[RMDB]
RNA sequence: GGGAACGACUCGAGUAGAGUCGAAAAGAUGAGCAGGCAGAUAAUCUUGUGCAGUAUGCAUGCUCGUAACUCCAGCGCACAAGUGGAAGCACAAGAUUUGAAUCCAGCAUAGCGCAGGAGCCGCAGAGAUAUUACCGGCGUUCGCGCCGGUAAUAUCAAAAGAAACAACAACAACAAC
Reactivity to DMS in 0.01 (KOAc 150mM, MgCl2 10mM, bicine 150mM(pH8.5), 24C), signal-to-noise 2, nucleotides 027 to 126: g010a000u040g000a050g020c000a000g000g000c000a090g050a130u030a030a050u000c000u000u000g000u000g000c020a230g040u000a060u020g000c000a040u000g000c010u000c000g030u000a040a140c020u000c000c010a060g000c030g030c020a090c230a150a180g030u000g000g010a110a120g010c000a000c010a020a020g000a200u000u010u000g030a200a080u000c020c000a030g010c120a120u010a120g000c000g000c000a020g000g010a010g050c010c030g000c260a040g030a260
Reactivity to 2A3 in 0.01 (KOAc 150mM, MgCl2 10mM, bicine 150mM(pH8.5), 24C), signal-to-noise 3, nucleotides 027 to 126: g170a010u140g010a010g000c010a000g000g000c020a010g010a150u100a090a040u050c000u010u010g010u020g020c020a050g060u140a040u030g010c030a050u010g020c000u010c010g000u020a030a000c010u000c000c000a030g020c010g020c010a010c010a150a200g150u040g100g030a010a030g010c000a000c000a000a000g000a030u060u100u250g090a030a040u010c000c010a000g000c100a190u090a110g010c000g000c000a030g000g010a000g010c000c030g090c060a030g090a000
Overview
The record gives the reactivity of an RNA of 177 nucleotides to DMS and 2A3. The reactions ran in a buffer of 150 mM KOAc, 10 mM MgCl2 and 150 mM bicine (pH 8.5), at 24 C. For DMS the reverse transcriptase was MarathonRT. 2A3 adducts were read by reverse transcription with SuperScript II with manganese.